RNA sequence: GGGAACGACUCGAGUAGAGUCGAAAAGCUAAAGAUCACCGGGCCGGCGGCACCAUCGUGGCGCAAGGGGCCUCGCCAUAUUGCCGAUAGGGGUCCGCGCGACACCUACGGAUAACACGUCGAUCGGACUGCGGGAGGUGUUCGCACCUCCCGCAGUAAAAGAAACAACAACAACAAC
Reactivity to 2A3 in 0.01 (KOAc 150mM, MgCl2 10mM, bicine 150mM(pH8.5), 24C), signal-to-noise 1, nucleotides 027 to 126: g020c000u140a120a080a020g040a030u090c020a020c050c000g000g020g170c040c030g090g030c000g000g000c000a020c000c000a090u030c120g030u040g000g000c010g120c220a130a100g020g000g000g010c000c010u040c040g000c000c010a000u100a070u140u300g150c080c010g160a170u000a020g000g000g000g190u050c000c010g180c050g070c020g020a000c000a000c000c020u000a000c000g010g000a030u090a120a040c070a000c120g090u050c030g020a080u020c000g010g000